[RMDB]
Conditions: 150 mM KOAc, 10 mM MgCl2 and 150 mM bicine (pH 8.5), 24 C. Chemical mapping of a 177-nucleotide RNA with 2A3 and DMS.
RNA sequence: GGGAACGACUCGAGUAGAGUCGAAAAGCUGACCGCCACAGUGAAGGUCUCCCAGACCGAUGGGCGGAUCGAUUGUGAGACCCUUCUUGGUAACAAAACCUUUCGCACGUCAUUCGUUGACGGGGCGUGUGCGAUUACGUUUCGACGUAAUCGCACAAAAAGAAACAACAACAACAAC
Reactivity to 2A3 in 0.01 (KOAc 150mM, MgCl2 10mM, bicine 150mM(pH8.5), 24C), signal-to-noise 1, nucleotides 027 to 126: g000c000u010g050a060c000c000g040c020c010a300c060a090g130u160g230a130a060g020g010u000c070u020c030c020c030a010g170a150c110c000g060a060u080g030g090g000c040g020g000a000u000c020g040a110u000u270g020u060g000a010g060a100c000c090c020u070u010c060u060u160g030g010u050a110a090c060a140a060a070a140c050c020u060u200u090c020g040c000a000c020g040u070c000a100u020u120c090g140u110u020g030a030c000g030g010g070g000c040g000
Reactivity to DMS in 0.01 (KOAc 150mM, MgCl2 10mM, bicine 150mM(pH8.5), 24C), signal-to-noise 1, nucleotides 027 to 126: g020c080u000g050a070c050c010g010c000c000a100c050a100g040u040g030a050a100g000g000u000c000u050c020c010c050a180g000a000c060c000g000a080u000g000g000g000c010g010g000a050u000c030g010a140u000u000g000u010g000a150g000a020c000c020c050u000u010c070u000u010g000g010u000a040a050c100a100a060a080a060c100c020u000u000u000c030g030c030a140c000g000u000c000a000u000u020c160g000u020u000g000a040c010g010g030g010g030c000g000
2A3 adducts were read by reverse transcription with SuperScript II with manganese. DMS adducts were read by reverse transcription with MarathonRT.